[RMDB]
RNA sequence: GGGAACGACUCGAGUAGAGUCGAAAAGGUCUAAAAACCAUGGUUGUGUCUGCGGGUCAAGAGCAAACUAACUGUAAUACUAGUUCCUUAGCUUAUUACGAACCUGUGCAGGGUCGUAAAAUGCUGAUCAUAGAUCUCUCUUCGGAGAGAUCUAUGAAAAAGAAACAACAACAACAAC
Reactivity to 2A3 in 0.01 (KOAc 150mM, MgCl2 10mM, bicine 150mM(pH8.5), 24C), signal-to-noise 2, nucleotides 027 to 126: g030g000u040c030u040a060a030a060a070a000c010c020a040u050g050g000u050u050g020u000g020u060c010u020g020c000g040g020g060u070c020a040a000g030a010g100c020a070a000a020c010u040a030a000c020u000g040u090a080a030u040a200c050u030a030g030u010u010c010c000u060u020a010g000c000u080u080a030u040u000a110c010g010a090a110c010c000u080g050u080g130c100a040g000g000g040u010c000g000u010a000a000a000a020u080g000c010u010g020a020
Reactivity to DMS in 0.01 (KOAc 150mM, MgCl2 10mM, bicine 150mM(pH8.5), 24C), signal-to-noise 3, nucleotides 027 to 126: g020g000u000c030u020a010a060a070a190a040c050c030a080u010g000g010u010u000g020u010g020u000c040u000g000c050g020g000g010u000c130a050a060g020a120g010c010a020a030a060c040u000a050a060c060u010g010u000a050a060u010a080c160u010a130g010u010u000c020c010u010u010a020g000c000u000u010a220u000u000a000c000g010a010a030c000c000u000g000u030g000c250a100g010g000g020u000c020g000u000a000a000a030a070u000g020c000u000g010a140
Record summary:
The record gives the reactivity of an RNA of 177 nucleotides to 2A3 and DMS. Conditions: 150 mM KOAc, 10 mM MgCl2 and 150 mM bicine (pH 8.5), 24 C. For 2A3, 1,735 sequencing reads were counted. 2A3 adducts were read by reverse transcription with SuperScript II with manganese.